An RNA of 207 nucleotides, treated with DMS and 2A3 and read out base by base. The DMS profile rests on 7,374 reads. Values cover nucleotides 27 to 156. It was measured as part of the RMDB library M2RFPK.
RNA sequence: GGGAACGACUCGAGUAGAGUCGAAAAUUCAAAUUGAACCGUCCUGUUAUCGAAAGAUAGGCAGAAGAUACGAAAUGUGUGACAGCAUGGGAAGUAAAGGCAGACCGUGGUUCCCUUGAGUAUCUUAAUUAGGGGGACGAGUUCGCUCGUCCCCCAAGACGUAUUAUGAGUUCGCUCAUAAUACGUCAAAAGAAACAACAACAACAAC
Reactivity to DMS in 0.01 (KOAc 150mM, MgCl2 10mM, bicine 150mM(pH8.5), 24C), signal-to-noise 3, nucleotides 027 to 156: u010u000c050a040a080a170u000u000g000a030a100c020c020g000u000c030c010u000g010u000u010a060u000c030g020a200a100a200g000a030u000a030g030g020c040a050g010a070a060g010a070u010a030c050g010a060a100a060u000g040u000g010u020g030a140c100a130g000c030a070u000g000g000g000a060a120g000u010a070a080a080g000g010c040a100g010a200c050c020g000u010g010g010u010u000c010c000c000u000u010g010a180g020u000a060u000c040u000u000a060a160u010u010a140g020g000g000g020g030a050c000g000a030g030u000u000c140g010c010u000c000g020u000c000c020c000c000c020a000a010
Reactivity to 2A3 in 0.01 (KOAc 150mM, MgCl2 10mM, bicine 150mM(pH8.5), 24C), signal-to-noise 1, nucleotides 027 to 156: u070u030c010a030a040a080u090u110g030a050a030c020c060g090u030c000c010u020g000u050u030a020u060c030g000a070a020a020g010a030u030a040g080g000c000a020g030a150a000g010a010u030a020c020g020a030a030a020u050g050u040g010u040g060a030c060a080g030c010a050u020g030g000g030a040a010g020u100a110a080a080g070g020c040a020g060a070c000c030g020u020g040g050u060u030c010c000c000u000u020g000a000g000u020a010u030c000u040u040a130a120u140u170a100g000g000g000g020g000a000c030g000a000g000u020u060c090g020c080u000c000g000u000c000c000c000c000c000a000a000